About this RNA: Chemical mapping of a 207-nucleotide RNA with 2A3 and DMS. The reactions ran in a buffer of 150 mM KOAc, 10 mM MgCl2 and 150 mM bicine (pH 8.5), at 24 C. The 2A3 profile rests on 3,598 reads.
RNA sequence: GGGAACGACUCGAGUAGAGUCGAAAAAUGGUAGUUAGUCUACUCGCUAUCCUAGUUACUUUGGAGUAAUCUAAAGUGUGUGUAAACGGGCGAAAGUCGGUAAAAUACUGGGGACAUAGGGUCAACAAGAACUAGUAGACCUUCGGGUCUACUAGAACAUGUCUAUCCUCUUCGGAGGAUAGACAUGAAAAGAAACAACAACAACAAC
Reactivity to 2A3 in 0.01 (KOAc 150mM, MgCl2 10mM, bicine 150mM(pH8.5), 24C), signal-to-noise 4, nucleotides 027 to 156: a000u080g020g000u030a040g020u100u050a060g040u030c010u040a050c010u030c010g010c030u050a050u110c020c010u030a040g020u050u100a040c010u050u000u030g020g010a030g030u100a120a120u000c020u050a020a000a010g020u020g010u010g010u000g020u050a070a110a040c030g040g010g010c030g060a080a020a000g030u060c040g000g050u050a030a050a020a040u130a050c040u020g010g000g010g010a000c010a050u090a040g060g020g030u040c020a040a030c020a130a060g080a080a020c000u000a000g000u000a000g000a000c000c000u010u040c130g060g000g000u000c000u000a000c000u000a000g000a000a000
Reactivity to DMS in 0.01 (KOAc 150mM, MgCl2 10mM, bicine 150mM(pH8.5), 24C), signal-to-noise 3, nucleotides 027 to 156: a120u000g020g010u000a040g020u000u000a090g030u010c010u000a010c020u000c030g000c040u000a080u000c010c030u000a090g010u010u010a010c010u000u010u000g000g010a060g020u010a120a120u010c020u000a010a030a050g000u000g040u000g020u010g000u000a050a130a060c050g000g010g030c030g020a110a050a130g030u010c010g000g000u000a050a060a030a100u000a020c030u010g020g010g010g020a120c060a110u000a080g010g010g010u010c040a050a080c060a060a160g020a090a180c000u010a020g010u000a020g000a010c010c000u000u000c300g050g020g020u000c000u000a000c000u000a000g000a030a120